[RMDB]
An RNA of 177 nucleotides, treated with 2A3 and DMS and read out base by base. Conditions: 150 mM KOAc, 10 mM MgCl2 and 150 mM bicine (pH 8.5), 24 C. It was measured as part of the RMDB library OK1LIB. 2A3 adducts were read by reverse transcription with SuperScript II with manganese. 2A3 is a SHAPE reagent: it acylates the 2'-hydroxyl of flexible nucleotides of all four kinds.
RNA sequence: GGGAACGACUCGAGUAGAGUCGAAAACUGGCCGAGGGUCGCGGCGAGGUCGCGUAGCCCGGCUUCGCUGGUGCUGAGCUUGAAAUCGGCGCUGACCAUACUCAUCAGCUCGGCGGGCGCGAGGGUGCUCAGGGGUAAAUUUCGAUUUACCCCUGAGAAAAGAAACAACAACAACAAC
Reactivity to 2A3 in 0.01 (KOAc 150mM, MgCl2 10mM, bicine 150mM(pH8.5), 24C), signal-to-noise 6, nucleotides 027 to 126: c020u030g080g010c010c010g030a080g000g020g030u040c010g020c010g060g020c020g020a040g000g040u030c010g000c040g090u090a060g020c010c020c020g010g000c000u040u040c040g000c020u070g030g050u110g010c020u010g000a030g010c030u130u220g130a090a100a030u110c040g000g020c030g030c080u090g040a100c010c000a050u110a170c050u070c050a160u030c040a030g050c020u010c000g000g000c000g000g020g000c020g000c010g010a080g050g040g030u110g030
Reactivity to DMS in 0.01 (KOAc 150mM, MgCl2 10mM, bicine 150mM(pH8.5), 24C), signal-to-noise 3, nucleotides 027 to 126: c080u000g020g010c000c020g010a060g000g000g010u010c020g000c050g010g000c000g000a030g010g000u000c000g000c060g060u020a080g000c030c040c010g000g000c010u020u010c120g010c020u000g020g010u010g000c000u000g010a050g010c050u010u030g020a030a070a110u000c070g000g000c020g010c020u030g020a050c000c010a180u010a170c130u020c100a070u030c100a100g000c010u000c020g010g010c010g010g000g000c020g010c050g000a110g020g010g010u010g020